[RMDB]
RNA sequence: GGGAACGACUCGAGUAGAGUCGAAAAGGUUAUGACUCAGAUGAUGAUCAAUGUGGACUAUAUGAGUUAUGGGAUCGAAUCGUUCAGUACAUGGGUUAUGGUUUCAACAAAUCGCACGGAGUAGCUUACUCAAUGCUUACUUACCUGACAGUAUAUCGAGAUGCACGUAGUUCGCUACGUGCAUCUCAAAAGAAACAACAACAACAAC
Reactivity to 2A3 in 0.01 (KOAc 150mM, MgCl2 10mM, bicine 150mM(pH8.5), 24C), signal-to-noise 2, nucleotides 027 to 156: g090g020u190u090a040u100g000a020c000u000c080a070g000a120u010g000a010u000g040a100u120c130a110a120u090g020u040g110g010a000c000u060a020u000a080u300g030a010g100u150u010a080u100g140g000g000a090u010c000g010a030a000u080c030g070u060u020c020a010g020u090a080c040a070u170g020g000g050u000u080a000u000g060g080u000u040u130c040a050a040c000a020a090a040u090c150g000c020a020c080g000g040a000g020u030a040g000c020u060u160a060c020u000c020a000a130u110g040c050u150u070a030c000u020u010a110c020c000u030g060a040c040a030g080u070a050u000a050u300c050